Structure probing data (DMS and 2A3) for a 170-nucleotide construct. The data come from the RNA Mapping Database (RMDB), library 15KLIB. The DMS profile rests on 13,364 reads.

RNA sequence: GGGAACGACUCGAGUAGAGUCGAAAAGAAGUCUCCCGCACGAGUCCUCUUCCUAGGUCCGGAGUCGAUCUCCAUCUGAUCCGUCCGGGCCCUCUUCGUCGGGGGAGCUCCCUCCCCGUCCUUCCCUACCCGCAACACUUCGGUGUUGCGAAAAGAAACAACAACAACAAC
Reactivity to DMS in 0.01 (KOAc 150mM, MgCl2 10mM, bicine 150mM(pH8.5), 24C), signal-to-noise 2, nucleotides 027 to 129: g040a130a080g020u030c020u000c000c010c010g060c060a080c040g030a000g020u030c060c040u030c050u040u030c020c010u010a000g020g030u000c000c000g030g000a020g040u060c300g030a040u010c040u060c230c160a140u070c130u000g060a030u010c050c050g050u040c020c030g020g030g060c000c030c040u040c080u070u010c090g000u020c010g040g020g010g020g030a040g060c080u010c000c000c000u050c000c000c000c020g000u010c010c080u010u050c010c010c020u000a000c140c050
Reactivity to 2A3 in 0.01 (KOAc 150mM, MgCl2 10mM, bicine 150mM(pH8.5), 24C), signal-to-noise 5, nucleotides 027 to 129: g130a070a030g090u030c000u000c010c000c000g020c020a040c000g000a010g040u080c000c040u040c070u120u070c020c020u020a030g020g000u000c010c000g010g020a030g090u240c040g040a000u010c050u030c090c030a150u090c120u110g010a020u000c030c110g100u000c000c000g010g000g000c010c000c000u050c040u100u100c040g060u010c000g000g000g010g000g020a010g010c010u030c000c010c000u010c000c000c000c000g040u040c000c000u010u010c010c010c000u020a060c030c000